[RMDB]
RNA sequence: GGGAACGACUCGAGUAGAGUCGAAAAAAAAAGAUAUGGAAUAGCUCCCCACCUCUAUUUCCAGUGUAAUCGCGAUGAAAUCGGAAACGAUGGAGCGAUAUUAGAGAGGCUAUUCCUAAGUCAAAAACGUAUAGAGAUGGUUCGCCAUCUCUAUACGAAAAGAAACAACAACAACAAC
Reactivity to DMS in 0.01 (KOAc 150mM, MgCl2 10mM, bicine 150mM(pH8.5), 24C), signal-to-noise 1, nucleotides 027 to 126: a050a080a010a020a090g020a120u000a150u000g000g030a030a010u000a010g000c020u000c170c000c030c060a300c060c000u000c010u000a050u010u010u010c170c100a120g050u000g050u010a080a050u000c000g000c010g000a060u000g000a010a040a020u000c010g030g000a050a060a050c010g010a000u000g000g010a070g000c000g010a010u000a010u000u000a020g000a000g010a090g050g000c010u010a000u010u000c000c000u010a040a040g000u000c080a080a030a070a100a120
Reactivity to 2A3 in 0.01 (KOAc 150mM, MgCl2 10mM, bicine 150mM(pH8.5), 24C), signal-to-noise 1, nucleotides 027 to 126: a000a030a040a010a030g150a160u210a110u120g000g000a000a000u010a000g000c020u090c100c000c030c020a020c000c010u060c020u020a070u180u140u020c160c100a020g040u020g030u300a150a100u030c000g000c020g170a300u080g010a110a010a000u000c000g050g000a000a000a060c000g000a030u030g000g010a020g000c030g020a000u030a050u040u030a000g000a000g000a010g000g000c020u000a000u000u000c000c000u050a100a020g150u040c060a000a040a110a180a120